[RMDB]
RNA sequence: GGGAACGACUCGAGUAGAGUCGAAAAGAUAUGGAAUGACCCAGGCUAGCGUUUCGGAAACGAGGACGCUUGGACCCUGCAUUCCUAAGUCAAAAUCGACAUAUAUAGUUCGCUAUAUAUGUCGAAACUGUAAGUAGGUGUUCGCACCUACUUACAGAAAAGAAACAACAACAACAAC
Reactivity to DMS in 0.01 (KOAc 150mM, MgCl2 10mM, bicine 150mM(pH8.5), 24C), signal-to-noise 6, nucleotides 027 to 126: g000a040u000a300u000g000g000a010a010u000g000a160c150c190c040a090g000g000c030u000a000g010c000g040u010u000u000c000g010g000a120a070a200c000g000a020g000g000a000c010g000c010u000u010g020g000a120c180c000c040u000g000c020a010u000u000c000c000u000a050a120g010u010c050a080a060a110a140u000c000g000a010c000a000u000a000u000a010u000a010g000u010u010c240g020c000u000a000u000a000u000a000u000g000u000c000g000a000a030a060
Reactivity to 2A3 in 0.01 (KOAc 150mM, MgCl2 10mM, bicine 150mM(pH8.5), 24C), signal-to-noise 3, nucleotides 027 to 126: g010a020u070a030u140g000g040a040a000u030g050a100c080c070c070a010g010g020c020u010a000g010c000g000u000u050u070c020g010g050a080a060a060c020g010a040g050g050a010c010g000c000u030u120g060g060a110c030c000c010u020g010c000a000u010u010c000c000u050a180a040g090u070c060a030a020a010a300u030c010g000a000c000a000u020a000u000a000u000a020g020u040u070c190g020c130u000a000u000a000u000a000u000g010u010c000g000a000a000a000